[RMDB]
RNA sequence: GGGAACGACUCGAGUAGAGUCGAAAAGCCGGAUUCGCCGACCAGAGCCACGGUCUCGCCGGGAUUGACGACAAUGUCCACAUCAUUGACCGUGACGAUCUCGCGCGCGCGGGUGCGGAAGACGGUAGUCAUACCCACUGUUCGCAGUGGGUAUGACAAAAGAAACAACAACAACAAC
Reactivity to 2A3 in 0.01 (KOAc 150mM, MgCl2 10mM, bicine 150mM(pH8.5), 24C), signal-to-noise 1, nucleotides 027 to 126: g040c010c000g010g050a070u020u000c030g030c030c050g050a110c030c030a050g020a010g180c020c040a070c060g030g000u000c010u050c080g010c030c000g030g000g010a030u040u030g030a010c050g010a040c020a050a090u090g030u000c070c050a110c020a140u130c010a030u050u080g060a110c060c000g010u000g050a060c030g040a030u030c010u000c000g080c010g000c010g010c000g030c060g100g060g020u130g050c030g000g040a030a000g120a010c050g010g050u030a040
Reactivity to DMS in 0.01 (KOAc 150mM, MgCl2 10mM, bicine 150mM(pH8.5), 24C), signal-to-noise 3, nucleotides 027 to 126: g000c010c000g020g020a180u000u000c030g020c040c070g000a100c050c080a160g000a140g000c050c040a050c090g010g010u000c010u010c090g010c070c060g000g000g000a030u000u010g010a110c010g010a110c070a030a030u000g020u010c070c150a190c130a090u010c050a040u000u000g000a090c030c000g010u010g000a130c040g000a030u000c010u000c030g000c140g000c060g010c180g010c050g010g000g040u010g000c110g020g000a060a070g010a120c000g000g000u000a090